[RMDB]
RNA sequence: GGGAACGACUCGAGUAGAGUCGAAAACGUAGUCGUCUUGCAGUUUGGGCAGCGUGAUGUCGGAAUUCGACUUGAUCACGUUGCCACGGCGGACCGUGAUGAGGGCGUCCUGGUCGUUCGGUGAGCGGCCUAUCGUGCCUUUCGAGGCACGAUAGGCAAAAGAAACAACAACAACAAC
Reactivity to DMS in 0.01 (KOAc 150mM, MgCl2 10mM, bicine 150mM(pH8.5), 24C), signal-to-noise 1, nucleotides 027 to 126: c090g010u000a090g000u000c020g010u020c020u000u000g020c040a080g010u010u000u000g010g000g040c030a040g020c000g010u000g010a010u000g010u030c000g000g000a060a180u040u000c030g010a010c010u000u020g040a080u000c000a000c000g020u000u010g010c010c000a000c020g000g020c020g010g020a050c070c090g020u000g030a070u000g030a110g020g000g000c060g000u010c050c020u010g010g020u000c020g000u010u060c030g000g050u010g010a060g000c030g020
Reactivity to 2A3 in 0.01 (KOAc 150mM, MgCl2 10mM, bicine 150mM(pH8.5), 24C), signal-to-noise 2, nucleotides 027 to 126: c010g040u080a010g100u100c050g050u030c030u060u180g000c030a120g030u130u160u190g040g000g000c020a000g010c020g020u020g000a000u030g000u010c020g020g260a210a300u300u180c040g000a000c090u090u250g080a020u000c000a010c000g000u010u000g000c000c020a010c000g000g000c040g030g030a070c030c010g010u050g030a100u080g070a090g040g020g010c030g020u070c000c010u060g000g000u000c000g050u010u010c040g080g110u090g010a030g020c050g020